[RMDB]
RNA sequence: GGGAACGACUCGAGUAGAGUCGAAAACAGGGAGGGAUUGCACUUGGCCCGGACGAGCGGCAGCCAAUGGGAUGUGAUCCGAUCCAAAGUGUCGUCAUCGUCCACGGCGUACACUAUGCACACCACGGGUGGUAGCAUGCUUCGGCAUGCUACCACCAAAAGAAACAACAACAACAAC
Reactivity to 2A3 in 0.01 (KOAc 150mM, MgCl2 10mM, bicine 150mM(pH8.5), 24C), signal-to-noise 1, nucleotides 027 to 126: c010a010g000g000g150a080g070g000g000a090u060u110g060c010a030c030u010u050g120g000c080c080c040g000g100a100c040g000a060g010c000g020g020c010a130g060c000c010a030a040u020g030g030g000a000u000g020u090g170a070u050c010c010g000a020u000c000c020a100a000a000g030u010g020u020c000g000u000c000a110u040c030g030u040c000c000a000c050g000g020c050g000u080a000c000a000c000u030a110u140g000c030a020c000a070c090c000a080c000g020

Annotation:
Chemical mapping of a 177-nucleotide RNA with 2A3. High 2A3 reactivity points to a flexible backbone, as in loops and unpaired stretches. The reactions ran in a buffer of 150 mM KOAc, 10 mM MgCl2 and 150 mM bicine (pH 8.5), at 24 C.